[RMDB]
Conditions: 150 mM KOAc, 10 mM MgCl2 and 150 mM bicine (pH 8.5), 24 C. This 207-nucleotide RNA was probed chemically with 2A3. 2A3 adducts were read by reverse transcription with SuperScript II with manganese.

RNA sequence: GGGAACGACUCGAGUAGAGUCGAAAACGCUGGGUCGUACAACCAGGUGGGUAAGACAGAACUAGUCUACUGAAGCGCGCACGGUAGACUAGUUCAAUGACGCCCAUAUUGGGUUGGCGACCUGUGCUGAAGCGCGCACGGCAACCGAAAGGUGCGACAUCAGAGACAACUUCGGUUGUCUCUGAUGAAAAGAAACAACAACAACAAC
Reactivity to 2A3 in 0.01 (KOAc 150mM, MgCl2 10mM, bicine 150mM(pH8.5), 24C), signal-to-noise 1, nucleotides 027 to 156: c050g010c000u040g000g000g000u000c000g100u080a300c040a000a010c000c000a010g010g030u010g000g000g000u020a220a070g120a120c120a020g010a010a000c010u000a010g000u000c000u000a000c000u020g040a200a050g030c010g000c000g000c010a010c040g000g000u000a000g010a000c000u000a000g010u000u010c000a000a000u020g020a050c090g000c010c000c020a010u080a160u030u110g130g010g000u000u010g050g020c000g000a000c010c000u000g020u020g010c050u060g010a120a010g020c000g000c030g020c000a030c020g020g000c030a140a130c000c010g020a100a040a010g060g010u040g000c030g040a030